Chemical mapping of a 207-nucleotide RNA with 2A3 and DMS. DMS adducts were read by reverse transcription with MarathonRT.

[RMDB]
RNA sequence: GGGAACGACUCGAGUAGAGUCGAAAAAGGUGAUUUCUCCUGCACCUUUAUCAAUGGAGGAAGUCGACUUUGCUGUGGGUCCCAAAGGGACCUUAGGUGCAGACAGUUACCGGCGGUGAAGUGUGAGCAUAGGUUCGUGUCUUCGGACACGAACCAAGAUAUGCAUAAGGUUCGCCUUAUGCAUAUCAAAAGAAACAACAACAACAAC
Reactivity to 2A3 in 0.01 (KOAc 150mM, MgCl2 10mM, bicine 150mM(pH8.5), 24C), signal-to-noise 5, nucleotides 027 to 156: a000g050g010u040g010a050u020u080u010c020u030c000c010u100g050c020a010c000c000u050u150u110a090u060c060a030a030u240g020g010a020g020g030a040a020g100u070c030g010a040c020u050u040u060g010c030u020g020u130g040g000g000u020c000c000c000a140a120a100g000g000g010a010c000c020u000u060a020g010g000u010g000c000a020g080a200c020a020g020u030u080a030c000c020g010g000c020g010g000u030g010a020a030g050u070g030u080g090a050g030c060a120u100a190g000g000u000u000c000g000u000g000u000c010u020u060c240g070g010a000c000a000c000g000a000a000c000c000a000a000
Reactivity to DMS in 0.01 (KOAc 150mM, MgCl2 10mM, bicine 150mM(pH8.5), 24C), signal-to-noise 2, nucleotides 027 to 156: a040g030g020u000g010a300u000u000u000c020u010c040c000u000g000c030a030c020c020u040u010u000a090u000c170a090a080u000g010g040a080g020g040a070a130g010u000c030g030a060c040u000u000u010g030c020u000g020u010g000g020g010u000c010c000c010a060a060a200g010g020g020a010c000c020u000u000a010g030g050u000g020c030a170g010a110c160a130g030u030u000a060c020c040g050g020c100g000g000u010g000a000a070g000u010g030u000g000a120g010c050a170u000a100g010g030u000u000c000g020u000g000u000c000u000u000c300g050g020a010c010a000c000g000a010a000c000c000a000a040